This 177-nucleotide RNA was probed chemically with 2A3 and DMS. For DMS the reverse transcriptase was MarathonRT. The reactions ran in a buffer of 150 mM KOAc, 10 mM MgCl2 and 150 mM bicine (pH 8.5), at 24 C. For DMS, 1,420 sequencing reads were counted.
[RMDB]
RNA sequence: GGGAACGACUCGAGUAGAGUCGAAAACCCUGGUUAUUCGUAACCAGGGGUUGAGUGAAUCCUGUCAGUGCAUCGGUGGAUCACACGAAACGCAUGGACGACAAUUACGGUUAUUCGUAACCGUAAAAGUCCGUCUUUCAUUCGUGAAAGACGGACUAAAAGAAACAACAACAACAAC
Reactivity to 2A3 in 0.01 (KOAc 150mM, MgCl2 10mM, bicine 150mM(pH8.5), 24C), signal-to-noise 1, nucleotides 027 to 126: c000c000c000u000g000g040u060u030a050u010u100c240g040u010a040a000c000c000a000g020g000g000g030u090u080g060a060g000u150g110a050a060u030c000c040u050g030u040c020a040g000u000g060c030a040u010c010g210g000u050g000g110a180u140c050a040c010a010c140g070a060a060a020c060g050c020a020u000g030g020a010c010g030a030c030a060a040u020u000a000c010g000g000u030u010a010u050u060c160g070u010a000a010c000c000g000u000a000a000a000
Reactivity to DMS in 0.01 (KOAc 150mM, MgCl2 10mM, bicine 150mM(pH8.5), 24C), signal-to-noise 2, nucleotides 027 to 126: c010c000c010u010g000g010u010u000a000u000u000c170g020u000a010a010c000c000a010g030g020g000g020u010u010g000a100g040u010g000a140a100u010c020c020u000g070u000c050a120g010u000g000c060a020u010c010g010g020u000g010g020a080u000c160a080c060a050c040g010a030a020a090c130g000c080a020u000g010g020a020c030g000a060c080a070a250u020u000a010c000g010g000u010u010a050u000u010c180g000u010a000a000c000c010g000u010a000a020a050